[RMDB]
RNA sequence: GGGAACGACUCGAGUAGAGUCGAAAACAGUUCAGAACAACCGCCGUCGACUUUGACGUCGGCCAGAUCGUCUCCGCGGGUGUGGCCCCGGUUGAUGAUCGCGACCGGAAUGCCCCGUGCCGCGGCGGUCGAUGGUUUUAUUCGUAAAACCAUCGACAAAAGAAACAACAACAACAAC
Reactivity to 2A3 in 0.01 (KOAc 150mM, MgCl2 10mM, bicine 150mM(pH8.5), 24C), signal-to-noise 4, nucleotides 027 to 126: c030a060g050u170u130c060a040g050a110a040c050a070a020c010c010g030c030c000g060u040c020g050a300c180u110u140u300g030a020c020g000u010c000g000g010c030c000a010g000a070u090c020g070u020c050u000c020c000g000c050g020g040g020u070g040u050g090g020c000c010c010c010g000g000u000u030g040a130u090g020a050u070c060g010c000g030a020c000c000g020g060a070a110u190g020c000c030c000c000g040u100g120c000c000g000c000g010g000c020g010
Reactivity to DMS in 0.01 (KOAc 150mM, MgCl2 10mM, bicine 150mM(pH8.5), 24C), signal-to-noise 3, nucleotides 027 to 126: c070a170g000u020u060c050a080g010a130a060c090a230a180c030c010g030c050c000g000u000c030g030a090c240u050u070u050g040a030c030g010u010c020g000g000c040c050a130g000a050u010c040g000u030c020u010c000c000g010c040g000g000g020u000g010u000g000g000c050c120c000c000g000g000u010u040g000a020u030g010a050u010c150g000c010g000a000c020c000g040g000a070a120u010g000c020c010c000c000g000u030g030c000c060g020c020g020g000c140g000